[RMDB]
RNA sequence: GGGAACGACUCGAGUAGAGUCGAAAACACCCGCCCGAGUGAACGUCACCAACUCGGCUGGAUUCCAAGCUGGUUGCCUGUCCUACGCUCAGCGCAACAACCGCAGACAUGCGACGGCCCCCGCCGGGACAUAAUAAUUGUUCGCAAUUAUUAUGUCAAAAGAAACAACAACAACAAC
Reactivity to DMS in 0.01 (KOAc 150mM, MgCl2 10mM, bicine 150mM(pH8.5), 24C), signal-to-noise 8, nucleotides 027 to 126: c190a180c030c010c020g010c240c020c030g010a040g020u000g010a090a100c110g010u000c050a070c080c050a110a040c010u000c010g010g020c050u000g010g010a110u000u000c040c040a090a110g020c050u000g020g020u000u000g010c030c030u000g010u000c040c040u000a080c110g020c050u000c060a060g010c080g000c040a040a070c080a070a080c120c030g000c030a070g010a090c180a050u000g010c020g010a110c060g010g010c020c020c010c020c050g020c090c060g000g010
Reactivity to 2A3 in 0.01 (KOAc 150mM, MgCl2 10mM, bicine 150mM(pH8.5), 24C), signal-to-noise 5, nucleotides 027 to 126: c040a050c000c010c010g030c030c030c020g020a020g000u040g070a160a040c050g080u050c050a010c070c020a080a060c010u010c040g020g000c020u030g020g020a110u120u060c030c010a060a030g020c040u080g080g010u110u040g020c000c010u040g000u090c010c030u050a050c040g010c020u060c040a020g010c010g010c070a030a070c020a060a040c050c010g000c020a020g030a110c040a090u090g010c030g030a020c020g060g000c000c010c000c010c000g020c020c010g070g060